[RMDB]
RNA sequence: GGGAACGACUCGAGUAGAGUCGAAAAUGGUUUCGACUACGUUGAUUGAGCCAGGGGAAGCGUGCCGGUGAAGGCUGGAGACCACCGUGAGCGUCGCAGCAAACCAAUAAGCGCCGAGAAGACUCAGCGCGACUACGCCCUCGCUGCCUAAGUAGCGCACUUAUAGGGUGUUCGCACCCUAUAAGUGAAAAGAAACAACAACAACAAC
Reactivity to 2A3 in 0.01 (KOAc 150mM, MgCl2 10mM, bicine 150mM(pH8.5), 24C), signal-to-noise 3, nucleotides 027 to 156: u110g060g020u020u030u010c030g010a010c010u040a020c020g010u020u020g020a100u010u040g020a040g090c140c070a070g000g020g000g020a030a040g010c020g020u040g030c060c000g020g010u040g050a120a010g080g000c030u040g030g020a100g000a080c020c000a010c010c050g100u120g090a040g000c080g030u020c020g000c000a010g000c000a040a070a070c030c010a040a080u110a110a020g020c020g010c020c040g030a010g020a290a050g090a110c020u020c020a000g000c010g020c000g030a000c020u100a020c050g060c000c020c000u020c040g020c010u020g030c010c070u080a210a050g010u030a030g030c020g000
Reactivity to DMS in 0.01 (KOAc 150mM, MgCl2 10mM, bicine 150mM(pH8.5), 24C), signal-to-noise 1, nucleotides 027 to 156: u000g050g030u010u020u010c000g010a090c010u000a070c010g020u010u010g030a040u010u000g010a050g000c060c050a120g020g020g010g020a120a020g010c070g030u020g030c000c000g010g050u000g030a080a080g020g020c060u000g010g000a230g030a100c050c020a060c000c000g030u000g020a100g000c040g000u020c020g030c000a000g010c020a100a060a100c060c030a050a110u020a090a140g000c000g020c000c010g020a030g020a070a140g000a300c010u000c000a080g000c040g010c000g000a030c060u000a070c030g000c000c010c010u000c040g000c030u010g000c000c010u030a080a190g040u000a060g000c010g020